Conditions: 150 mM KOAc, 10 mM MgCl2 and 150 mM bicine (pH 8.5), 24 C. The record gives the reactivity of an RNA of 177 nucleotides to 2A3 and DMS. The 2A3 profile rests on 1,987 reads. DMS adducts were read by reverse transcription with MarathonRT. Source: RMDB library TTRINS, as collected in RNAgym.
RNA sequence: GGGAACGACUCGAGUAGAGUCGAAAAGAUAUGGAUCUAGAACUACGACCAACCUGAGCGAAGAACACUUCUAGCGUCGGAAACGACGCUAGAAGUGGGAGCUCACGCGUCGCUAGAUCCUAAGUCACAUACAACUCCUCUUCGGAGGAGUUGUAUGAAAAGAAACAACAACAACAAC
Reactivity to 2A3 in 0.01 (KOAc 150mM, MgCl2 10mM, bicine 150mM(pH8.5), 24C), signal-to-noise 1, nucleotides 027 to 126: g060a020u120a110u240g000g000a010u000c020u000a030g050a180a160c220u250a130c300g030a000c000c010a020a030c030c020u030g030a010g000c010g150a300a070g000a300a060c000a000c010u040u070c000u010a010g060c000g000u010c000g030g000a030a120a120c010g010a010c000g000c000u010a000g000a000a000g000u020g000g010g010a000g000c000u000c020a000c020g060c080g000u050c020g000c000u000a030g000a000u010c000c010u010a070a040g000u040c010a030
Reactivity to DMS in 0.01 (KOAc 150mM, MgCl2 10mM, bicine 150mM(pH8.5), 24C), signal-to-noise 2, nucleotides 027 to 126: g000a040u010a300u030g000g000a020u020c010u000a000g010a180a090c220u000a300c010g000a010c010c010a030a030c040c020u000g000a020g040c000g010a120a200g040a120a140c010a000c000u010u000c000u010a010g000c000g040u010c010g010g000a060a110a270c010g010a010c000g030c000u000a000g000a000a010g030u000g010g000g000a060g000c000u000c010a000c010g000c070g000u000c010g020c010u000a000g000a000u000c010c010u000a010a060g000u010c060a280